Chemical mapping of a 177-nucleotide RNA with DMS and 2A3.
RNA sequence: GGGAACGACUCGAGUAGAGUCGAAAAGCCGUGCUCGAGAGGGAGCAGAAAAUGCAGAGCUAUCCCGUCGUUUCGCUAAACAAAUGCGAAACGACAAAUUGCGUUACAUACGCAAUCCUGUAAUGAACGUUGUAUAGCAUUUCGAUGCUAUACAACGAAAAGAAACAACAACAACAAC
Reactivity to DMS in 0.01 (KOAc 150mM, MgCl2 10mM, bicine 150mM(pH8.5), 24C), signal-to-noise 6, nucleotides 027 to 126: g010c030c070g020u000g010c020u000c030g000a140g020a150g020g000g010a050g030c010a050g000a050a080a080a070u010g010c040a060g000a170g010c040u000a140u010c010c010c010g050u000c010g010u000u000u000c000g010c000u000a050a100a130c300a070a050a080u000g000c000g020a000a010a000c010g000a000c000a010a040a020u000u000g010c000g020u000u010a120c260a130u010a020c010g010c010a010a010u000c090c050u000g010u010a080a090u010g000a100a180
Reactivity to 2A3 in 0.01 (KOAc 150mM, MgCl2 10mM, bicine 150mM(pH8.5), 24C), signal-to-noise 9, nucleotides 027 to 126: g020c000c010g080u040g010c000u010c020g240a240g030a050g160g270g000a010g010c020a000g120a010a170a010a020u180g000c040a020g020a020g030c010u020a050u060c000c010c010g000u000c000g000u000u000u000c000g000c010u060a150a220a120c070a050a100a030u100g000c000g000a000a000a000c000g000a000c000a000a080a000u020u010g000c000g010u020u090a190c070a130u230a030c040g000c000a000a020u040c020c040u110g050u140a120a170u140g090a110a020
Description:
The RNA was probed in 150 mM KOAc, 10 mM MgCl2 and 150 mM bicine (pH 8.5) at 24 C. For DMS, 7,867 sequencing reads were counted.